[RMDB]
RNA sequence: GGGAACGACUCGAGUAGAGUCGAAAAACUACCUAGAAGUCAUGGCACUAUUGAAUCCUGAUGUUGUGAUAAUCAGACCUGAAAUACUGGAGUUGGAAAUCUUGCGGAGAGUAUGUGAGGUGGUAAGACGACUAUUCUUCUUCGGAAGAAUAGUCGUAAAAGAAACAACAACAACAAC
Reactivity to DMS in 0.01 (KOAc 150mM, MgCl2 10mM, bicine 150mM(pH8.5), 24C), signal-to-noise 2, nucleotides 027 to 126: a050c140u000a110c020c010u030a160g000a110a080g000u000c040a050u000g010g000c020a050c040u010a060u010u010g010a090a070u010c080c050u020g000a090u000g020u000u010g010u000g020a080u000a110a040u010c080a030g000a110c070c030u000g000a070a060a040u010a070c100u010g010g000a030g030u000u010g000g000a070a100a080u010c060u000u000g010c110g000g010a120g000a050g010u020a020u000g010u010g020a090g020g000u000g000g010u010a070a100g010
Chemical mapping of a 177-nucleotide RNA with DMS. The RNA was probed in 150 mM KOAc, 10 mM MgCl2 and 150 mM bicine (pH 8.5) at 24 C.